[RMDB]
RNA sequence: GGGAACGACUCGAGUAGAGUCGAAAAGAAGUAGAUGCCAUUGCCCUGGAUCGAACUGUUGAAGUAGUCGCGGGUGCCCAGGAUGUAGGGCAAUGUCCGCGUGAAGAAGUCCAUCGGAUGAUUGAUCUCCUAUCCUCCUCUUCGGAGGAGGAUAGGAAAAAGAAACAACAACAACAAC
Reactivity to DMS in 0.01 (KOAc 150mM, MgCl2 10mM, bicine 150mM(pH8.5), 24C), signal-to-noise 2, nucleotides 027 to 126: g000a080a080g000u030a150g020a060u020g010c000c010a080u000u010g000c000c000c040u000g010g000a080u000c050g010a110a090c050u010g040u000u020g000a060a150g010u010a080g020u000c000g050c020g000g010g000u000g030c000c030c030a200g030g000a190u030g020u020a110g000g040g000c020a040a010u010g020u060c000c000g010c020g040u010g010a050a050g010a090a100g010u010c010c020a060u030c020g010g000a070u010g000a050u030u000g000a120u000c020
An RNA of 177 nucleotides, treated with DMS and read out base by base. The data come from the RNA Mapping Database (RMDB), library OK1LIB. For DMS the reverse transcriptase was MarathonRT. The DMS profile rests on 2,812 reads. Conditions: 150 mM KOAc, 10 mM MgCl2 and 150 mM bicine (pH 8.5), 24 C.